[RMDB]
RNA sequence: GGGAACGACUCGAGUAGAGUCGAAAAGGUAAAGAAGGACAGUUCAUUUUUAGACUAGCAUAUGGAAUGCUCCAUGAAGGAGAUGGUACCAUACCUGGUCCUAAAGAAUUGGUUGGAUUUAGGUACACUGGGAAUAAAGAGGAACCAUUGAGGGAAAAGCAAUAAUAAAGUUCGCUUUAUUAUUGCUAAAAGAAACAACAACAACAAC
Reactivity to 2A3 in 0.01 (KOAc 150mM, MgCl2 10mM, bicine 150mM(pH8.5), 24C), signal-to-noise 6, nucleotides 027 to 156: g040g000u050a050a050a030g030a020a030g040g010a010c030a030g010u040u060c040a170u080u070u020u050u130a030g000a020c010u020a010g000c020a050u030a020u120g040g020a260a100u220g040c010u000c010c010a110u220g170a170a080g010g010a000g000a000u040g030g050u100a120c010c010a010u000a010c010c000u000g000g000u030c030c000u040a040a040a010g040a040a060u120u060g050g000u050u070g000g040a060u030u060u140a030g000g010u040a030c060a030c080u020g000g010g050a030a020u070a070a110a010g020a020g000g010a010a010c040c020a050u050u080g020a040g000g040g040a010a060a100
Reactivity to DMS in 0.01 (KOAc 150mM, MgCl2 10mM, bicine 150mM(pH8.5), 24C), signal-to-noise 3, nucleotides 027 to 156: g020g000u000a040a040a070g010a060a080g020g020a100c030a060g030u000u000c040a100u010u040u010u000u000a060g010a060c010u000a030g050c170a060u000a050u010g000g010a090a180u000g010c020u010c000c000a120u000g020a230a280g000g010a030g010a020u000g010g020u000a140c010c020a040u010a040c020c010u000g000g000u000c000c030u000a040a030a110g010a030a100u000u000g030g020u000u010g030g000a170u000u010u000a060g010g020u000a050c070a070c030u000g020g010g010a090a070u000a060a070a090g000a070g020g000a040a050c050c040a120u000u000g000a080g000g030g000a060a100a110